[RMDB]
RNA sequence: GGGAACGACUCGAGUAGAGUCGAAAAAGUCCAUAUGCCCAUCUUUGCUGGUCCGGAUGGAUGUUUAUACCCGCUAUGGAUGCCUAUUACUGAAAUGUAAUAGAUGCCUAAUACUCUCUCUCAGGGAGAGAGUUUAGAUGCCUCCAAAGGACAUGCUCCCGUAUUUACCAUUCGUGGUAAAUACGGGAAAAGAAACAACAACAACAAC
Reactivity to 2A3 in 0.01 (KOAc 150mM, MgCl2 10mM, bicine 150mM(pH8.5), 24C), signal-to-noise 2, nucleotides 027 to 156: a000g020u020c010c010a020u040a060u110g010c000c010c010a010u000c010u010u030u120g030c030u090g000g070u050c020c010g020g030a030u020g010g010a030u070g100u050u150u010a180u040a080c060c040c040g000c020u040a050u030g010g010a000u040g000c000c000u000a000u000u000a000c000u070g110a130a040a150u160g000u010a000a000u010a000g040a030u100g010c000c000u080a100a070u150a140c000u000c000u020c000u010c000u000c150a100g000g300g000a000g010a000g000a000g010u010u000u000a000g000a000u050g010c010c050u100c020c010a150a060a040g000g000a010c010a070u080g010c000u010
The record gives the reactivity of an RNA of 207 nucleotides to 2A3. The data come from the RNA Mapping Database (RMDB), library OK3TST. For 2A3 the reverse transcriptase was SuperScript II with manganese. For 2A3, 1,021 sequencing reads were counted.